[RMDB]
RNA sequence: GGGAACGACUCGAGUAGAGUCGAAAAAAGUGAGGGUAUCAAAGUGGUUGAACUUUGAGCUUGGCUUAGCUAGUUGGGUCUGUAGACACCGCACCUGGCUUGCCCGUUCCAAGUCGAGAGUGGGUUCAUGUUUCCUGAGCGAAGGCUCGGGUGAUGUCGUCAACAUAUAGUUCGCUAUAUGUUGACGAAAAGAAACAACAACAACAAC
Reactivity to DMS in 0.01 (KOAc 150mM, MgCl2 10mM, bicine 150mM(pH8.5), 24C), signal-to-noise 1, nucleotides 027 to 156: a020a060g010u020g010a030g020g020g000u000a040u000c010a060a030a090g020u000g000g030u010u000g010a090a020c010u010u010u000g000a160g000c050u000u000g060g100c040u000u010a080g040c020u010a070g020u020u000g030g000g030u010c040u010g030u000a120g010a110c060a050c040c050g030c020a070c100c000u000g010g020c000u030u000g010c000c050c150g050u010u000c060c030a040a090g010u030c010g010a130g010a050g040u000g010g010g020u000u000c090a060u010g010u000u000u000c020c000u010g010a030g020c000g030a100a090g040g050c010u000c010g030g010g000u000g010a070u010g020u000
Reactivity to 2A3 in 0.01 (KOAc 150mM, MgCl2 10mM, bicine 150mM(pH8.5), 24C), signal-to-noise 4, nucleotides 027 to 156: a000a010g090u100g000a060g000g040g030u100a110u160c070a040a030a010g020u050g060g060u060u100g050a070a030c000u030u020u030g000a010g010c030u110u150g020g000c010u080u080a020g000c030u050a020g040u040u030g020g010g000u030c040u060g080u060a050g020a050c030a030c100c030g070c020a020c010c010u010g000g000c000u020u020g010c000c020c000g040u060u000c020c020a010a000g010u020c040g060a010g000a000g140u040g000g040g000u080u090c050a060u130g020u040u110u010c000c000u000g010a020g000c020g070a190a040g160g000c000u000c010g000g010g000u040g040a070u110g020u030